The record gives the reactivity of an RNA of 177 nucleotides to 2A3 and DMS. Source: RMDB library OK1LIB, as collected in RNAgym. 2A3 adducts were read by reverse transcription with SuperScript II with manganese. The RNA was probed in 150 mM KOAc, 10 mM MgCl2 and 150 mM bicine (pH 8.5) at 24 C.
RNA sequence: GGGAACGACUCGAGUAGAGUCGAAAAAAGUUAGGGUUAGUACGUGUAGAUGACUCGUUCGACUACAUUUUGCGUAAACCCAUCACGUUCUAUACCAAAACAAGUUUUGAAAAUCUUCUCAAGAAGAGACCACUACCUAUUUCGAUAGGUAGUGGUCAAAAGAAACAACAACAACAAC
Reactivity to 2A3 in 0.01 (KOAc 150mM, MgCl2 10mM, bicine 150mM(pH8.5), 24C), signal-to-noise 3, nucleotides 027 to 126: a000a030g100u090u070a020g000g030g010u030u030a040g020u000a060c020g050u050g010u040a010g010a140u080g020a030c020u000c140g110u170u030c030g130a090c000u080a050c050a070u110u120u120u140g030c010g060u080a020a020a030c010c040c010a010u020c020a010c030g000u000u000c010u050a160u040a140c040c000a030a020a030a080c050a040a150g040u040u030u050u100g080a070a040a000a050u000c000u040u000c040u020c050a070a070g000a020a020g010a030
Reactivity to DMS in 0.01 (KOAc 150mM, MgCl2 10mM, bicine 150mM(pH8.5), 24C), signal-to-noise 2, nucleotides 027 to 126: a000a030g010u000u000a170g070g030g020u000u010a020g020u000a020c300g040u000g000u000a020g060a000u070g000a100c120u010c180g000u070u010c020g000a120c000u040a040c000a050u000u040u030u140g000c050g000u000a040a080a000c000c020c010a040u020c200a000c060g000u040u000c010u000a100u030a160c070c000a060a010a040a110c260a050a090g010u000u000u000u000g000a010a060a090a160u000c030u000u000c000u100c200a080a090g000a100a000g000a000